[RMDB]
RNA sequence: GGGAACGACUCGAGUAGAGUCGAAAACUGCUCGACAUUGGCGGCGUCGAUCUCGCCUCGGAUGGUCACCACUGUCGCCAGGUGAUGCAGGUAGGCCCGAAUCUGAGCGCCACCGUAGUCAACGGCGAGGACGGAGAUAGUUCGCUAUCUCCGUCCUAAAAGAAACAACAACAACAAC
Reactivity to DMS in 0.01 (KOAc 150mM, MgCl2 10mM, bicine 150mM(pH8.5), 24C), signal-to-noise 2, nucleotides 027 to 126: c010u000g000c050u000c080g000a030c070a230u010u010g000g030c000g020g020c070g040u010c050g000a030u000c040u000c100g030c080c030u000c110g000g010a060u010g020g000u010c040a120c090c050a080c100u020g010u010c060g000c070c040a080g020g000u000g010a010u000g020c040a110g010g000u000a050g000g000c030c010c010g010a080a060u010c060u000g000a150g020c130g020c060c000a070c020c020g020u000a140g010u010c100a070a060c070g020g000c020g010
Reactivity to 2A3 in 0.01 (KOAc 150mM, MgCl2 10mM, bicine 150mM(pH8.5), 24C), signal-to-noise 2, nucleotides 027 to 126: c020u040g000c010u000c030g070a020c040a180u110u080g010g010c010g000g000c040g040u040c020g020a040u000c030u010c040g070c030c040u030c050g130g040a090u090g060g010u040c010a000c040c020a020c100u150g070u070c040g020c030c010a030g010g010u020g000a030u140g070c030a000g060g020u140a020g020g020c000c010c000g030a040a110u050c050u130g040a040g100c040g000c000c010a000c000c020g040u040a030g050u060c040a050a030c060g000g030c030g040
An RNA of 177 nucleotides, treated with DMS and 2A3 and read out base by base.
For DMS the reverse transcriptase was MarathonRT.
The reactions ran in a buffer of 150 mM KOAc, 10 mM MgCl2 and 150 mM bicine (pH 8.5), at 24 C.
For DMS, 1,762 sequencing reads were counted.
The data come from the RNA Mapping Database (RMDB), library OK2TST.